[RMDB]
RNA sequence: GGGAACGACUCGAGUAGAGUCGAAAAGACACGACGGAGACGUCGUGUCAAGUCCAGUGCGAAAGCACUGGACAAAUAAGGGCUGUUUUUCUCGCUGACUAUCAGCCCCAAACAAAAAAUGUCAGCAUAAAAUGAGUAAUUUCGAUUACUCAUUUUAAAAAGAAACAACAACAACAAC
Reactivity to 2A3 in 0.01 (KOAc 150mM, MgCl2 10mM, bicine 150mM(pH8.5), 24C), signal-to-noise 3, nucleotides 027 to 126: g000a000c000a000c000g010a000c000g020g030a050g020a050c000g000u000c000g000u000g000u010c000a000a000g000u000c010c000a000g000u000g010c000g080a130a020a010g010c010a000c010u010g010g010a000c010a000a040a000u100a030a050g010g000g000c010u000g070u020u020u010u070u080c110u080c090g000c000u000g000a000c000u010a010u050c000a000g000c000c000c010c050a030a060a010c030a020a010a000a000a000a000u030g000u010c000a010g020c010a000
Reactivity to DMS in 0.01 (KOAc 150mM, MgCl2 10mM, bicine 150mM(pH8.5), 24C), signal-to-noise 5, nucleotides 027 to 126: g010a010c000a000c000g010a020c000g010g020a270g000a220c010g020u000c000g020u000g000u000c000a010a080g020u000c000c010a000g020u000g000c000g020a120a090a180g010c000a000c000u000g000g010a000c010a000a040a090u030a110a150g000g000g010c000u000g000u000u000u010u000u020c100u010c140g020c010u000g000a030c000u000a030u000c010a000g010c000c000c000c140a030a030a140c050a000a000a030a020a300a060u000g010u000c000a010g000c010a290
Source: RMDB library OK2TRN, as collected in RNAgym. An RNA of 177 nucleotides, treated with 2A3 and DMS and read out base by base. For 2A3, 10,368 sequencing reads were counted. Values are in units of 0.01, from 0 to 300, in steps of 10.